This 177-nucleotide RNA was probed chemically with 2A3 and DMS. For DMS the reverse transcriptase was MarathonRT. 2A3 adducts were read by reverse transcription with SuperScript II with manganese. For DMS, 1,196 sequencing reads were counted. Source: RMDB library OK1LIB, as collected in RNAgym. The 2A3 profile rests on 1,773 reads.

[RMDB]
RNA sequence: GGGAACGACUCGAGUAGAGUCGAAAACUCAGGUGAGUGAAUUGUGUUCGUAUGGAUGAACUUUAGUAACCCAUAUUUGAUAUUCUAGGCUCUCACCACUUUAGAGAACAUAAUAAGCCGCCUUCGAGGGAUAGCAUAGGUUCGCCUAUGCUAUCCCAAAAGAAACAACAACAACAAC
Reactivity to 2A3 in 0.01 (KOAc 150mM, MgCl2 10mM, bicine 150mM(pH8.5), 24C), signal-to-noise 3, nucleotides 027 to 126: c010u020c000a000g030g000u030g080a290g010u010g000a050a090u020u000g020u020g000u040u000c030g050u130a080u090g070g010a100u060g030a130a230c000u180u220u000a020g000u050a100a120c020c030c030a030u060a100u160u200u160g120a060u030a030u120u100c020u060a010g000g000c010u000c010u010c040a020c070c000a020c060u140u090u070a110g030a010g000a010a020c000a000u030a030a000u020a010a050g010c010c010g000c030c000u020u080c050g020a080
Reactivity to DMS in 0.01 (KOAc 150mM, MgCl2 10mM, bicine 150mM(pH8.5), 24C), signal-to-noise 1, nucleotides 027 to 126: c000u010c020a080g040g020u000g010a110g000u020g000a200a020u000u000g080u010g000u000u010c080g000u000a020u000g000g000a050u010g000a070a150c120u000u010u030a080g000u000a010a090c060c010c000a010u060a120u000u010u000g000a150u010a160u010u040c020u010a010g000g000c020u020c120u000c060a100c050c060a160c120u010u020u030a040g040a070g000a020a000c010a030u100a040a050u030a070a250g000c000c000g000c000c030u010u020c010g020a300